[RMDB]
RNA sequence: GGGAACGACUCGAGUAGAGUCGAAAAAUCAACGACAAUACCGAUGCGGCGGUAAAAAAAGCGCUGUCGCAGCUUAAGGAUAACCGCUCAUUCCAGGGCAUUUAUCGAAAGGCGCUGGCGAGGGCUGGAUAAUAAAGUGAUUCGUCACUUUAUUAUCAAAAGAAACAACAACAACAAC
Reactivity to DMS in 0.01 (KOAc 150mM, MgCl2 10mM, bicine 150mM(pH8.5), 24C), signal-to-noise 9, nucleotides 027 to 126: a070u040c110a090a070c120g010a080c100a070a160u020a060c040c040g010a080u010g010c060g000g010c010g000g000u000a000a000a070a090a060a070a080g010c130g000c010u000g000u010c040g010c010a040g000c060u010u010a090a130g010g010a090u010a070a080c090c090g000c000u010c010a120u020u020c090c050a040g010g000g010c020a050u020u010u010a090u030c120g000a040a070a060g000g000c010g010c020u000g000g010c190g010a080g000g000g010c030u010g000
Reactivity to 2A3 in 0.01 (KOAc 150mM, MgCl2 10mM, bicine 150mM(pH8.5), 24C), signal-to-noise 9, nucleotides 027 to 126: a010u150c060a060a070c020g140a030c040a080a090u060a150c020c010g040a030u030g000c000g010g000c010g020g010u120a100a060a010a010a020a040a040g160c110g000c040u020g020u030c010g000c010a010g010c020u130u130a080a040g050g020a030u050a080a050c030c030g010c020u010c010a120u150u040c020c010a010g040g030g000c030a030u070u100u060a210u130c100g090a090a020a040g050g000c060g000c110u020g020g010c030g040a130g010g020g000c020u060g060